Annotation:
Chemical mapping of a 207-nucleotide RNA with DMS and 2A3. High DMS reactivity at an A or C suggests that its Watson-Crick edge is free.

[RMDB]
RNA sequence: GGGAACGACUCGAGUAGAGUCGAAAACGCAGUGUUCGCACUGCGCCAUCUCCUAAGUCUCUCCCGAUGAAAGUGCUAGCCAUCGAUCUCUCGGAAACGAGAGGGAGGCUGUCACUGGAGGGAGAGAUAUGGAAAACCGGUAUCUUUCGAGAUACAACACAACCUGCUAAUUCGUUAGCAGGUUGUGAAAAGAAACAACAACAACAAC
Reactivity to DMS in 0.01 (KOAc 150mM, MgCl2 10mM, bicine 150mM(pH8.5), 24C), signal-to-noise 1, nucleotides 027 to 156: c010g030c000a030g070u030g010u010u010c300g040c000a040c000u000g020c020g010c020c040a140u000c070u000c000c020u000a140a230g010u000c000u000c020u000c030c020c000g010a170u010g000a130a120a050g030u000g010c000u010a070g010c030c000a240u000c100g000a030u000c000u000c020u000c000g000g000a060a110a280c060g000a030g010a020g000g010g000a050g030g040c000u020g010u000c000a050c010u000g020g000a080g000g000g000a000g000a000g000a000u000a000u010g000g000a050a020a120a090c060c010g000g000u000a020u000c010u000u010u000c170g000a200g030a160u000a040c020a150a300
Reactivity to 2A3 in 0.01 (KOAc 150mM, MgCl2 10mM, bicine 150mM(pH8.5), 24C), signal-to-noise 5, nucleotides 027 to 156: c010g000c000a000g000u020g070u110u200c230g050c120a000c000u010g000c000g060c010c000a170u110c070u000c020c010u090a190a110g020u010c000u000c000u010c000c000c000g300a300u030g000a000a020a000g010u010g000c010u030a000g000c010c000a240u300c110g080a100u030c010u010c000u010c010g050g020a120a070a060c000g000a000g000a000g010g000g000a010g000g010c000u010g020u010c000a000c000u010g010g010a010g000g000g000a000g000a000g000a000u000a010u010g020g010a000a090a040a070c040c050g120g010u010a000u000c020u010u170u170c220g060a030g000a040u030a000c010a080a130
Background: Source: RMDB library RNAMAK, as collected in RNAgym.